[RMDB]
RNA sequence: GGGAACGACUCGAGUAGAGUCGAAAACUACGGGGCGCAGCAGGCGCGAAACCUUUACACUGCACGCCAGUGCGAUAAGGGGACUCCAUCUGCGAGGGCAUAUCGUCCUCGCUUUUCUGUACCGUAACACAACUCUACCGUUCGCGGUAGAGUUGUGAAAAGAAACAACAACAACAAC
Reactivity to 2A3 in 0.01 (KOAc 150mM, MgCl2 10mM, bicine 150mM(pH8.5), 24C), signal-to-noise 3, nucleotides 027 to 126: c010u010a020c000g000g010g030g050c050g000c040a070g010c050a040g150g070c020g000c020g040a020a010a020c010c010u010u000u000a010c030a010c000u040g000c050a080c180g090c090c030a010g000u050g040c080g070a060u020a080a020g010g000g000g030a040c010u000c020c020a110u060c030u040g000c000g000a000g000g000g010c040a090u120a130u300c160g000u010c000c000u000c000g000c000u010u000u010u010c000u010g020u010a030c020c000g020u050a100a010
Reactivity to DMS in 0.01 (KOAc 150mM, MgCl2 10mM, bicine 150mM(pH8.5), 24C), signal-to-noise 3, nucleotides 027 to 126: c090u000a020c010g010g030g030g000c030g040c040a070g010c210a070g010g010c090g060c120g020a040a110a160c040c000u000u000u020a110c080a030c060u020g000c030a090c140g000c160c070a110g010u010g030c050g020a130u020a020a030g000g000g000g060a150c040u030c020c080a020u030c080u000g000c000g000a000g000g000g000c000a150u040a090u040c220g000u000c000c020u000c000g020c020u010u010u030u000c090u000g010u000a090c030c010g010u000a050a220
Chemical mapping of a 177-nucleotide RNA with 2A3 and DMS.
It was measured as part of the RMDB libraries RFM100 and RFMREP.
For DMS the reverse transcriptase was MarathonRT.
Conditions: 150 mM KOAc, 10 mM MgCl2 and 150 mM bicine (pH 8.5), 24 C.
Values cover nucleotides 27 to 126.